RNA sequence: GGGAACGACUCGAGUAGAGUCGAAAAAGAGCUGUAAUGGCUUUUGGUGGAACCAGGUGUCUCGAGAGUUCUGGUCUGGGUUCGAAUCCUACGGCCGGACGUGGUUGCAAUUAUACAACUCUUUGUGGGUUGGCGCCGCGCCCAAGCUCAACUGCACGUUUCUGUAUAUGUUCGCAUAUACAGAAACAAAAGAAACAACAACAACAAC
Reactivity to DMS in 0.01 (KOAc 150mM, MgCl2 10mM, bicine 150mM(pH8.5), 24C), signal-to-noise 2, nucleotides 027 to 156: a060g000a020g040c000u020g020u000a200a090u020g020g010c000u000u000u000u000g010g050u000g000g000a120a130c020c010a160g010g050u000g000u000c010u000c020g010a290g010a190g010u000u000c060u010g080g010u000c010u000g010g010g010u000u000c100g000a180a180u010c020c010u000a080c090g020g060c010c020g000g020a020c050g050u000g000g020u000u000g040c030a130a150u010u010a240u000a300c010a010a010c040u000c030u000u010u030g020u010g030g010g010u000u000g020g010c090g000c040c000g010c000g010c020c010c000a080a130g010c010u000c060a040a160c070u000g010c040a140c140
Reactivity to 2A3 in 0.01 (KOAc 150mM, MgCl2 10mM, bicine 150mM(pH8.5), 24C), signal-to-noise 4, nucleotides 027 to 156: a000g010a000g010c020u020g050u150a110a080u190g030g020c000u050u060u070u050g060g020u080g040g040a040a020c020c020a040g030g080u070g060u050c060u040c080g080a080g000a020g090u110u020c040u080g020g000u000c010u020g050g010g000u020u080c050g040a040a070u050c000c010u030a060c090g000g000c010c000g010g000a030c000g010u000g010g010u100u300g020c000a040a040u200u050a070u130a150c020a020a000c010u020c040u070u130u300g130u300g060g000g000u000u020g030g000c010g000c010c010g010c000g000c000c010c000a010a020g010c010u020c050a040a060c070u070g010c050a030c130

This 207-nucleotide RNA was probed chemically with DMS and 2A3. Conditions: 150 mM KOAc, 10 mM MgCl2 and 150 mM bicine (pH 8.5), 24 C. 2A3 is a SHAPE reagent: it acylates the 2'-hydroxyl of flexible nucleotides of all four kinds. For 2A3, 2,828 sequencing reads were counted. Reactivities are given for positions 27 through 156. It was measured as part of the RMDB library ARCHII.